[RMDB]
The data come from the RNA Mapping Database (RMDB), library RFMREP.
Chemical mapping of a 177-nucleotide RNA with 2A3 and DMS.
2A3 adducts were read by reverse transcription with SuperScript II with manganese.
The DMS profile rests on 1,221 reads.
Conditions: 150 mM KOAc, 10 mM MgCl2 and 150 mM bicine (pH 8.5), 24 C.
For DMS the reverse transcriptase was MarathonRT.
In probing experiments dimethyl sulfate is read out at A N1 and C N3, which are open when not base-paired.
RNA sequence: GGGAACGACUCGAGUAGAGUCGAAAACACAAUCCUGUGUUUGUGACAUAGCAGUCAGUUGCCAUGGAGAUGAUUGCUUUAUCACCAACUCCUCUUUGCAAUGACUUCACAGCAAGGUUAUGGAGAAGAUCACACUGUACUUCGGUACAGUGUGAUCAAAAGAAACAACAACAACAAC
Reactivity to 2A3 in 0.01 (KOAc 150mM, MgCl2 10mM, bicine 150mM(pH8.5), 24C), signal-to-noise 2, nucleotides 027 to 126: c020a010c040a070a130u200c040c080u110g000u020g000u040u010u030g010u000g000a010c010a030u060a030g080c080a010g020u020c010a060g020u120u100g130c070c060a160u170g130g020a200g010a060u050g000a000u040u010g000c000u050u020u060a060u030c010a000c010c010a030a130c010u010c000c000u000c010u000u040u080g000c010a000a140u070g030a210c030u080u050c170a040c010a050g020c020a030a020g030g000u140u140a090u150g000g000a030g020a100a000
Reactivity to DMS in 0.01 (KOAc 150mM, MgCl2 10mM, bicine 150mM(pH8.5), 24C), signal-to-noise 2, nucleotides 027 to 126: c040a040c060a070a090u010c200c130u000g070u010g000u010u000u000g010u000g000a030c180a050u000a000g010c070a000g020u000c010a050g020u020u000g030c040c130a120u010g000g020a110g010a160u000g020a040u010u000g020c050u000u010u000a090u000c060a030c050c120a140a260c030u000c000c010u000c060u000u000u000g000c000a070a130u000g020a180c190u000u000c090a060c160a140g020c010a010a020g000g050u000u020a050u010g000g020a050g000a180a090